[RMDB]
RNA sequence: GGGAACGACUCGAGUAGAGUCGAAAAUGGUCACAGACAUGGUGAAACCCCAUCUCUACCAAAAAAUACAAAAAUGAGCCAGACGUGGUGGGCAUGCACCUGUAGCCUCAGCUACUCAGGAGACUGAUAUCGCAGUUCAAUUCGUUGAACUGCGAUAAAAAGAAACAACAACAACAAC
Reactivity to DMS in 0.01 (KOAc 150mM, MgCl2 10mM, bicine 150mM(pH8.5), 24C), signal-to-noise 1, nucleotides 027 to 126: u020g010g000u000c080a080c130a130g040a060c090a060u000g000g040u010g010a170a030a120c030c000c000c000a110u020c060u020c060u000a080c080c060a000a020a030a070a120a110u020a050c130a020a000a010a030a060u010g010a130g000c040c020a060g050a100c170g020u020g010g000u000g000g020g060c010a030u000g000c100a060c040c050u000g010u010a060g020c040c110u000c060a010g000c040u000a000c030u010c020a070g040g000a060g000a130c030u000g000a170
Source: RMDB library OK2TRN, as collected in RNAgym. An RNA of 177 nucleotides, treated with DMS and read out base by base. The reactions ran in a buffer of 150 mM KOAc, 10 mM MgCl2 and 150 mM bicine (pH 8.5), at 24 C.